Notes:
This 207-nucleotide RNA was probed chemically with 2A3. It was measured as part of the RMDB library OK3TST.
[RMDB]
RNA sequence: GGGAACGACUCGAGUAGAGUCGAAAACUUUUUUACUCAUCUUAAAUCCAUUUUAUUUUCCUUCAUCUGAGCCCCUUAAAACUAAUGUGUUACUGUCGAUUCACCAUGAUCUUGGCUGGCUGUCUUCUUCCUUCAUGGCUGCUAGUAAUGACAAUUACCAUGCAGUCAGUUUCGACUGACUGCAUGGAAAAGAAACAACAACAACAAC
Reactivity to 2A3 in 0.01 (KOAc 150mM, MgCl2 10mM, bicine 150mM(pH8.5), 24C), signal-to-noise 2, nucleotides 027 to 156: c050u190u000u030u100u170u220a100c070u090c030a090u100c120u100u150a160a090a040u070c030c040a120u040u050u100u100a150u100u120u060u100c020c030u140u120c060a160u030c070u140g030a080g080c010c000c020c040u120u040a110a240a020a000c020u120a210a130u160g020u010g030u090u070a070c070u070g010u000c020g060a070u030u030c040a040c110c000a000u030g000a010u070c000u110u120g000g090c060u010g060g000c030u020g070u050c010u060u000c000u140u040c010c060u060u070c020a030u040g000g000c010u000g000c020u000a000g000u070a090a030u060g010a010c000a010a050u070u100a060